RNA sequence: GGGAACGACUCGAGUAGAGUCGAAAAUCCGUACUCAAGCGAGCCUUCAAAGAACGCACGGUUACCAAGACCUAUCACUCGCUAGUGCAAGGACAUAUGGAUCCGCUGAGCGGCACGAUUGAUGCAUCUAUUGGGCGUCAUCCUUCGGCUGGCUGGAGGAGGGUGCCACUUUCGAGUGGCACCCUCCAAAAGAAACAACAACAACAAC
Reactivity to 2A3 in 0.01 (KOAc 150mM, MgCl2 10mM, bicine 150mM(pH8.5), 24C), signal-to-noise 1, nucleotides 027 to 156: u010c010c030g040u060a070c000u000c060a040a000g030c010g010a000g030c030c020u090u030c090a150a130a070g020a170a020c040g020c010a020c030g000g000u020u000a030c030c020a070a070g090a030c080c000u040a050u130c020a000c030u040c050g030c030u050a000g000u000g090c030a010a090g040g000a070c000a010u150a090u170g100g000a030u030c020c010g030c090u110g040a000g050c000g000g000c050a020c190g030a020u000u070g030a030u010g020c090a090u030c060u150a090u140u210g140g030g020c040g010u040c020a030u040c000c020u140u090c030g000g000c010u010g050g000c000u060g000g140a060
Structure probing data (2A3) for a 207-nucleotide construct. The RNA was probed in 150 mM KOAc, 10 mM MgCl2 and 150 mM bicine (pH 8.5) at 24 C. The data come from the RNA Mapping Database (RMDB), library OK3TST. The 2A3 profile rests on 661 reads. For 2A3 the reverse transcriptase was SuperScript II with manganese.